[RMDB]
RNA sequence: GGGAACGACUCGAGUAGAGUCGAAAAAAAAAAAGAUAUGGAUCGAUGGGACUCGACGAAGCUACGUAACAUCGUUCGGAAACGAACGUGGUAGCAGAGAGUAACAUCGAUCCUAAGUCAAAAAAAACAUGGACUGUAUGUUCGCAUACAGUCCAUGAAAAGAAACAACAACAACAAC
Reactivity to DMS in 0.01 (KOAc 150mM, MgCl2 10mM, bicine 150mM(pH8.5), 24C), signal-to-noise 1, nucleotides 027 to 126: a000a020a090a070a070a070a120g000a040u000a300u000g020g000a010u000c010g020a060u000g000g000g000a030c000u000c000g000a150c260g020a050a150g000c000u000a030c000g040u000a010a020c200a020u000c020g020u040u020c000g000g000a150a070a090c000g030a010a010c010g070u020g000g000u000a000g030c000a050g010a130g000a030g000u000a040a020c000a000u000c000g000a020u000c030c010u020a000a020g030u020c020a010a000a040a090a080a040a100a150
Structure probing data (DMS) for a 177-nucleotide construct.
For DMS, 1,038 sequencing reads were counted.